Conditions: 150 mM KOAc, 10 mM MgCl2 and 150 mM bicine (pH 8.5), 24 C. The record gives the reactivity of an RNA of 177 nucleotides to 2A3 and DMS. It was measured as part of the RMDB libraries RFM100 and RFMREP. For 2A3 the reverse transcriptase was SuperScript II with manganese.
RNA sequence: GGGAACGACUCGAGUAGAGUCGAAAACUUCGAUCCGUUGGAUAAUACGAUAAGACAAAUAAUUAGAGCGGUUCCAGUGACUCUGUUUUAACUGGAACUGCCUGGGCUACGGGCUCAAUUGGAUUAGAUUUAACCACGAUUUCGAUCGUGGUUAAAUAAAAGAAACAACAACAACAAC
Reactivity to 2A3 in 0.01 (KOAc 150mM, MgCl2 10mM, bicine 150mM(pH8.5), 24C), signal-to-noise 7, nucleotides 027 to 126: c030u080u060c040g030a030u010c000c020g040u050u090g040g040a060u090a200a040u110a180c040g060a050u060a160a040g110a040c090a040a100a040u220a050a080u220u130a090g020a020g090c000g010g000u000u000c000c000a000g000u010g030a040c040u020c080u240g170u120u140u030u110a030a000c000u000g000g000a000a000c000u000g000c000c000u020g000g000g000c010u070a090c110g080g110g000c020u010c010a010a100u060u170g030g020a030u050u030a070g030
Reactivity to DMS in 0.01 (KOAc 150mM, MgCl2 10mM, bicine 150mM(pH8.5), 24C), signal-to-noise 5, nucleotides 027 to 126: c080u020u010c060g000a020u010c020c020g020u000u010g010g010a100u010a090a110u030a090c080g010a100u010a050a070g010a150c080a050a050a110u030a060a090u020u030a040g000a140g020c000g000g000u000u000c010c000a000g010u010g010a080c150u050c150u030g010u020u010u010u010a130a040c000u000g000g000a010a000c000u000g000c010c000u010g010g000g000c000u000a080c120g000g000g000c050u000c010a040a080u000u020g010g020a050u000u010a060g010